[RMDB]
RNA sequence: GGGAACGACUCGAGUAGAGUCGAAAAGAUAUGGAGCACUCGCGAUAAGCACCCUUCGGAAACGAAGGUGUGCUUUUGACGCGAAACUCCUAAGUCAAAGUCAGACCGCGUUCGCGCGGUCUGACAAGUCCUAUGUACUGUUCGCAGUACAUAGGACAAAAGAAACAACAACAACAAC
Reactivity to 2A3 in 0.01 (KOAc 150mM, MgCl2 10mM, bicine 150mM(pH8.5), 24C), signal-to-noise 1, nucleotides 027 to 126: g000a000u110a010u150g000g000a000g000c060a020c190u000c020g000c020g060a120u070a200a040g000c000a000c010c010c000u000u000c010g000g040a010a050a050c020g000a000a010g000g030u080g000u000g000c000u000u000u020u010g000a000c010g010c020g020a010a030a030c000u010c000c000u010a100a000g050u000c050a150a090a030g010u000c000a000g010a020c030c010g010c020g090u060u150c170g010c010g030c020g220g000u000c000u020g000a020c000a000a000
Reactivity to DMS in 0.01 (KOAc 150mM, MgCl2 10mM, bicine 150mM(pH8.5), 24C), signal-to-noise 2, nucleotides 027 to 126: g000a020u000a300u000g010g000a010g030c050a130c230u000c000g030c000g020a150u010a010a020g020c000a000c010c010c000u000u020c000g010g000a100a050a160c000g000a010a010g010g010u010g020u000g020c000u000u000u010u010g010a160c060g020c000g000a010a080a220c000u000c000c010u010a030a130g000u000c020a110a100a150g010u000c010a000g010a020c020c010g010c000g000u010u010c300g020c030g010c000g000g000u000c000u000g010a000c020a020a080